[RMDB]
Notes
Conditions: 150 mM KOAc, 10 mM MgCl2 and 150 mM bicine (pH 8.5), 24 C. The record gives the reactivity of an RNA of 177 nucleotides to DMS and 2A3. For 2A3, 2,946 sequencing reads were counted.
RNA sequence: GGGAACGACUCGAGUAGAGUCGAAAAGACUCAUCAGGUAGCCUAAUAGACUACGACUUACGCGGUGGGUCGUGAAUAAGCCCGGAGUACAUUCCCAAUGGAACUAGGGAACCCCUCCGGUCUUAUCCUAUUUGUCAAGGUUCGCCUUGACAAAUAGAAAAGAAACAACAACAACAAC
Reactivity to DMS in 0.01 (KOAc 150mM, MgCl2 10mM, bicine 150mM(pH8.5), 24C), signal-to-noise 3, nucleotides 027 to 126: g000a020c000u000c010a030u000c020a100g000g020u000a000g020c000c010u000a130a130u030a220g020a040c020u010a010c000g000a170c160u000u000a120c200g020c200g010g020u010g000g000g000u000c000g000u010g000a090a040u000a000a010g010c090c000c010g000g000a010g020u000a090c200a300u010u000c010c000c000a070a170u010g000g000a060a060c120u000a270g000g000g000a030a030c100c150c300c000u000c000c010g000g000u000c000u010u000a010u010c050
Reactivity to 2A3 in 0.01 (KOAc 150mM, MgCl2 10mM, bicine 150mM(pH8.5), 24C), signal-to-noise 2, nucleotides 027 to 126: g000a000c010u000c000a010u010c030a040g140g050u020a000g000c000c000u130a210a160u120a130g050a050c020u010a010c030g140a070c070u150u240a060c120g010c070g130g020u020g020g010g000u000c010g030u090g040a070a050u010a010a000g000c000c000c000g000g000a000g010u060a040c020a080u030u000c000c000c060a010a010u130g090g030a080a060c130u040a190g000g000g000a020a000c040c000c000c010u000c000c000g010g000u000c000u010u000a000u000c000
High 2A3 reactivity points to a flexible backbone, as in loops and unpaired stretches.